The record gives the reactivity of an RNA of 207 nucleotides to DMS and 2A3.
The reactions ran in a buffer of 150 mM KOAc, 10 mM MgCl2 and 150 mM bicine (pH 8.5), at 24 C.
Values cover nucleotides 27 to 156.
It was measured as part of the RMDB library RNAMAK.
[RMDB]
RNA sequence: GGGAACGACUCGAGUAGAGUCGAAAAACAGACAUUCGUGUCUGUCAGUUGCGUACUACAAGUGCAAUGACGUGCUGAACUACGAAAUGUUCCCAAAUAGGAACAUUCGCAGCAUAAGACAGCACUUGUAUCGCUCCAUUCAGUCUUCGGACUGAAAUAUAAGGUGUUGAUUCGUCAACACCUUAUAAAAAGAAACAACAACAACAAC
Reactivity to DMS in 0.01 (KOAc 150mM, MgCl2 10mM, bicine 150mM(pH8.5), 24C), signal-to-noise 6, nucleotides 027 to 156: a030c000a010g010a020c000a080u000u010c300g050u000g020u000c010u000g010u000c030a150g010u000u000g010c010g000u000a140c050u000a020c010a010a020g020u010g020c010a150a140u000g020a160c220g040u000g000c000u020g000a120a200c030u010a070c000g000a040a040a050u000g010u000u000c010c010c020a040a130a180u010a060g010g000a030a010c010a050u000u000c010g000c000a030g030c010a050u000a120a140g010a120c050a140g010c000a010c000u000u000g010u000a000u000c080g020c020u010c020c020a220u000u000c000a020g020u000c010u000u020c300g040g010a030c010u000g000a010a030a230
Reactivity to 2A3 in 0.01 (KOAc 150mM, MgCl2 10mM, bicine 150mM(pH8.5), 24C), signal-to-noise 9, nucleotides 027 to 156: a000c010a000g020a000c000a010u070u120c290g100u090g000u040c010u020g010u010c030a030g020u120u130g010c010g030u090a130c050u010a010c040a010a000g000u000g030c010a130a300u120g040a050c070g010u010g010c000u010g010a190a100c090u100a050c280g040a090a040a120u010g000u000u010c020c010c010a130a220a100u300a050g010g000a000a000c000a000u000u000c010g000c020a000g000c000a010u030a060a070g070a060c030a050g140c000a010c000u000u000g000u010a020u060c000g000c000u010c000c010a020u020u000c000a000g000u000c000u010u170c250g120g010a000c000u000g000a010a030a000